[RMDB]
Structure probing data (DMS) for a 177-nucleotide construct.
The reactions ran in a buffer of 150 mM KOAc, 10 mM MgCl2 and 150 mM bicine (pH 8.5), at 24 C.
RNA sequence: GGGAACGACUCGAGUAGAGUCGAAAAGAACCAGGCUUCGGCCUGGUUCAUAAUAACGCGGGCGUGGGACACAGCCGGAGCUCGCCUCGGAUAGUCUCAGUAUAAUCUUAGCCUUCGGGCUAAGAAACUUUAUAUUAAUCUUCGGAUUAAUAUAAAGAAAAGAAACAACAACAACAAC
Reactivity to DMS in 0.01 (KOAc 150mM, MgCl2 10mM, bicine 150mM(pH8.5), 24C), signal-to-noise 1, nucleotides 027 to 126: g010a000a040c000c010a030g020g030c000u000u020c160g030g000c000c020u010g030g010u010u000c000a000u000a030a040u010a110a050c100g030c050g000g000g010c040g050u000g000g000g000a120c070a080c130a220g000c060c010g010g030a250g010c030u010c080g030c030c030u000c050g000g030a100u010a080g000u000c010u000c010a130g000u000a100u020a110a130u000c010u000u000a010g010c000c000u000u010c150g060g010g010c000u000a000a010g010a010a060a070
The data come from the RNA Mapping Database (RMDB), library M2PK50.